[RMDB]
RNA sequence: GGGAACGACUCGAGUAGAGUCGAAAAAGCGACGUCGCGCAUGAUGUCGGUGGGUUCGCGCACCGGCGCCCCACAGGUCAGGCAGAACGCGCCCGGGGAACGGGUGAGCCGACCGACUUGAAGCAGGCCGGGAUAGUGAAUUCGUUCACUAUCCCGGAAAAGAAACAACAACAACAAC
Reactivity to DMS in 0.01 (KOAc 150mM, MgCl2 10mM, bicine 150mM(pH8.5), 24C), signal-to-noise 1, nucleotides 027 to 126: a000g000c000g000a000c000g070u000c050g050c230g050c040a070u010g000a040u000g000u000c000g000g030u010g000g000g070u030u000c080g010c010g020c070a300c010c000g000g000c050g000c300c000c010c000a090c220a110g000g000u020c110a070g000g010c020a110g010a210a070c180g040c030g000c060c000c130g000g000g000g000a080a010c090g050g000g000u000g000a160g000c000c000g010a070c000c000g000a030c040u000u050g000a130a010g000c040a110g000g000
Reactivity to 2A3 in 0.01 (KOAc 150mM, MgCl2 10mM, bicine 150mM(pH8.5), 24C), signal-to-noise 3, nucleotides 027 to 126: a000g060c040g060a060c000g010u110c020g050c010g060c100a070u200g030a020u050g040u030c010g000g000u030g040g070g000u060u180c040g000c000g000c070a060c020c000g060g000c050g020c000c000c000c010a040c020a020g040g010u060c050a080g050g030c030a060g050a300a070c090g000c000g000c050c000c000g000g000g020g000a140a090c000g030g000g050u010g030a020g000c000c000g090a000c020c000g030a030c010u060u100g040a020a000g020c100a050g000g050

Structure probing data (DMS and 2A3) for a 177-nucleotide construct. For DMS, 1,368 sequencing reads were counted. Source: RMDB library OK1LIB, as collected in RNAgym. Values cover nucleotides 27 to 126. Conditions: 150 mM KOAc, 10 mM MgCl2 and 150 mM bicine (pH 8.5), 24 C.